[RMDB]
RNA sequence: GGGAACGACUCGAGUAGAGUCGAAAAGAAAAGACGAUGUUAUUAUGAUUCUCGAGUAAUAGCAGGUCAAGCGUACUACUCGCCGAACGGAAGGCGGACUGUUCGCGGAAUGAAACGAGAAAGAAAAAUCACCCGUAAUGUUCGCAUUACGGGUGAUAAAAGAAACAACAACAACAAC
Reactivity to 2A3 in 0.01 (KOAc 150mM, MgCl2 10mM, bicine 150mM(pH8.5), 24C), signal-to-noise 4, nucleotides 027 to 126: g060a010a140a000a030g030a000c050g070a170u010g010u020u000a010u000u010a020u070g100a190u050u010c000u000c010g010a020g000u000a000a020u010a010g000c030a010g020g080u080c130a090a030g000c000g020u050a010c010u010a010c020u040c050g040c000c010g080a170a090c110g140g050a110a010g030g000c000g020g010a010c060u040g010u030u110c020g000c040g030g040a070a100u140g080a080a120a060c030g000a000g030a050a060a020g100a020a070a030a030
Reactivity to DMS in 0.01 (KOAc 150mM, MgCl2 10mM, bicine 150mM(pH8.5), 24C), signal-to-noise 2, nucleotides 027 to 126: g020a080a220a070a100g020a060c030g000a080u000g010u020u010a050u010u020a000u000g000a070u030u000c030u010c020g000a300g030u000a000a010u000a030g010c010a030g000g000u040c050a070a120g000c040g020u010a050c030u000a050c060u020c030g000c010c020g010a080a070c230g010g000a140a080g020g000c030g010g010a020c070u010g000u000u010c040g000c020g010g020a130a070u050g040a060a020a080c010g000a040g000a030a110a090g000a030a060a060a110
Notes: The record gives the reactivity of an RNA of 177 nucleotides to 2A3 and DMS. For DMS, 3,256 sequencing reads were counted. Conditions: 150 mM KOAc, 10 mM MgCl2 and 150 mM bicine (pH 8.5), 24 C. 2A3 adducts were read by reverse transcription with SuperScript II with manganese.